[RMDB]
RNA sequence: GGGAACGACUCGAGUAGAGUCGAAAAACAUGCCCACCGUGUACCGGAGAGAGGGGUCACUGGAGGGUGCUUGCGUGCUCAGCUGCCAUCUGGCAAGUGGCUCUGACGGUACCACAGCAGCUCGUGGAUAUAGGCACACAUUCGUGUGUGCCUAUAUAAAAGAAACAACAACAACAAC
Reactivity to DMS in 0.01 (KOAc 150mM, MgCl2 10mM, bicine 150mM(pH8.5), 24C), signal-to-noise 4, nucleotides 027 to 126: a100c200a090u010g030c010c010c010a170c140c150g010u010g020u000a020c010c000g010g010a120g010a130g020a170g000g000g000g000u000c010a020c010u010g020g020a180g000g010g010u000g010c060u010u010g020c160g010u000g000c090u010c080a120g020c100u000g010c080c010a070u000c090u010g000g000c080a100a080g020u000g000g000c000u010c000u010g000a160c010g000g000u000a030c070c030a080c100a040g000c080a040g000c080u000c060g030u000g000g010
Reactivity to 2A3 in 0.01 (KOAc 150mM, MgCl2 10mM, bicine 150mM(pH8.5), 24C), signal-to-noise 3, nucleotides 027 to 126: a000c040a060u180g050c000c020c010a010c020c050g100u090g010u040a010c010c000g040g020a150g010a010g010a040g050g010g000g000u020c010a010c050u060g060g040a040g060g030g020u040g020c060u120u160g040c050g160u140g040c050u060c180a050g000c020u030g010c010c010a090u110c080u110g090g020c040a060a020g000u020g020g000c000u000c000u000g070a050c010g010g010u000a000c000c020a020c010a030g070c020a020g050c020u070c060g040u090g080g050